The record gives the reactivity of an RNA of 177 nucleotides to 2A3 and DMS. It was measured as part of the RMDB library OK2TST. The reactions ran in a buffer of 150 mM KOAc, 10 mM MgCl2 and 150 mM bicine (pH 8.5), at 24 C. The DMS profile rests on 10,200 reads. The 2A3 profile rests on 8,679 reads.
RNA sequence: GGGAACGACUCGAGUAGAGUCGAAAAAAGCAGUUUCAAUAUCUGCUCAGAAUCCGAAAUUGCAUCUUCACCGCGCUUGAUGGUGCCGGAAAUCGGGCAGGUCUCGAUGCGCCGCCCAUUGACGCGACUAUAUCCGUGAUUUCGAUCACGGAUAUAGAAAAGAAACAACAACAACAAC
Reactivity to 2A3 in 0.01 (KOAc 150mM, MgCl2 10mM, bicine 150mM(pH8.5), 24C), signal-to-noise 3, nucleotides 027 to 126: a010a000g000c010a010g000u030u060u070c040a060a010u050a100u200c010u030g070c060u050c050a070g100a080a020u040c040c040g020a030a020a030u080u070g020c020a080u010c030u120u110c050a050c100c040g000c000g040c110u010u020g000a010u000g000g050u070g090c180c020g010g000a030a000a020u010c010g020g000g000c080a130g090g180u060c010u000c000g010a020u040g060c070g050c050c000g000c000c000c000a000u000u000g010a010c010g000c000g030a020
Reactivity to DMS in 0.01 (KOAc 150mM, MgCl2 10mM, bicine 150mM(pH8.5), 24C), signal-to-noise 8, nucleotides 027 to 126: a090a050g010c010a020g010u000u000u000c070a120a100u000a120u000c010u000g020c160u010c170a070g020a070a100u000c280c070g010a020a040a040u000u000g000c080a090u000c070u000u010c070a130c190c020g020c010g030c140u010u000g010a020u000g010g000u000g010c140c020g010g010a040a090a020u000c010g020g010g020c030a140g010g020u020c010u000c010g010a020u000g010c200g010c010c000g000c010c000c000a030u000u000g010a020c020g000c010g010a300